Source information
The data come from the RNA Mapping Database (RMDB), library OK2TRN. The record gives the reactivity of an RNA of 177 nucleotides to DMS and 2A3. For 2A3, 3,012 sequencing reads were counted. As a SHAPE reagent, 2A3 marks flexible, mostly unpaired nucleotides at the ribose 2'-OH. The RNA was probed in 150 mM KOAc, 10 mM MgCl2 and 150 mM bicine (pH 8.5) at 24 C.
RNA sequence: GGGAACGACUCGAGUAGAGUCGAAAAGCUGGUCGUCGGGCAGAUCCAGGGUGGACAGCACCUCCAGGUUGGUGCGCAUCGCGGUCAGCGGAGUGCGCAGCUCGUGGGAGGACACCGCCGCGAAGUCGUUGCAGGAUGUAUUCGUACAUCCUGCAACAAAAGAAACAACAACAACAAC
Reactivity to DMS in 0.01 (KOAc 150mM, MgCl2 10mM, bicine 150mM(pH8.5), 24C), signal-to-noise 3, nucleotides 027 to 126: g010c050u000g000g020u000c040g010u000c040g020g000g020c090a080g010a070u000c050c070a140g000g000g020u000g000g010a110c140a120g010c090a130c020c010u000c040c020a100g010g020u010u000g000g020u000g030c040g010c020a050u010c030g000c020g000g020u010c230a130g020c010g020g010a070g020u000g020c000g020c000a040g010c000u010c060g020u010g000g000g000a030g000g010a070c080a110c030c010g000c040c040g000c070g010a070a090g020u000c130
Reactivity to 2A3 in 0.01 (KOAc 150mM, MgCl2 10mM, bicine 150mM(pH8.5), 24C), signal-to-noise 2, nucleotides 027 to 126: g040c030u050g060g010u050c030g050u000c020g030g030g000c050a020g010a090u090c060c000a030g020g000g050u030g030g030a080c060a050g020c060a100c010c010u020c000c010a050g050g070u090u060g060g030u020g020c000g010c000a030u070c010g000c040g050g210u210c080a040g030c000g000g010a030g040u060g040c000g000c020a090g050c000u010c060g100u210g060g030g000a060g020g010a000c020a020c000c010g040c000c020g050c020g020a050a010g060u110c120